[RMDB]
RNA sequence: GGGAACGACUCGAGUAGAGUCGAAAAGCACUACGGUCUGUGGAAGCCGGUGGGAGCCUCGGCGGCUGCGCAGAACACGCUCAUCACCCCCAAGGGCCAGUAACAGCCCUCAGCGGAGGCCCCUUGCCUUGGGAGGUAUAUUCGUAUACCUCCCAAGAAAAGAAACAACAACAACAAC
Reactivity to 2A3 in 0.01 (KOAc 150mM, MgCl2 10mM, bicine 150mM(pH8.5), 24C), signal-to-noise 2, nucleotides 027 to 126: g020c010a020c080u180a040c110g010g010u000c030u020g050u090g060g070a100a000g000c000c020g150g090u050g030g060g020a100g040c020c010u020c030g090g030c020g000g000c020u040g020c010g000c000a010g010a050a040c110a020c060g020c000u020c010a090u090c030a160c000c010c000c010c000a010a010g020g000g010c010c010a050g070u140a060a020c020a080g010c010c020c010u020c040a010g020c020g070g010a000g000g020c000c010c000c000u020u030g020c000
Reactivity to DMS in 0.01 (KOAc 150mM, MgCl2 10mM, bicine 150mM(pH8.5), 24C), signal-to-noise 5, nucleotides 027 to 126: g000c040a130c090u000a110c080g020g020u000c030u010g020u010g010g010a300a060g020c010c040g030g020u010g010g010g010a130g010c050c030u010c030g000g020c020g010g000c040u010g000c210g020c030a050g000a060a060c080a100c120g000c020u010c030a110u020c100a280c040c020c010c020c030a130a060g000g010g010c000c060a150g000u020a100a120c240a150g000c020c000c060u000c120a050g020c060g010g000a100g000g010c010c010c020c020u000u010g010c260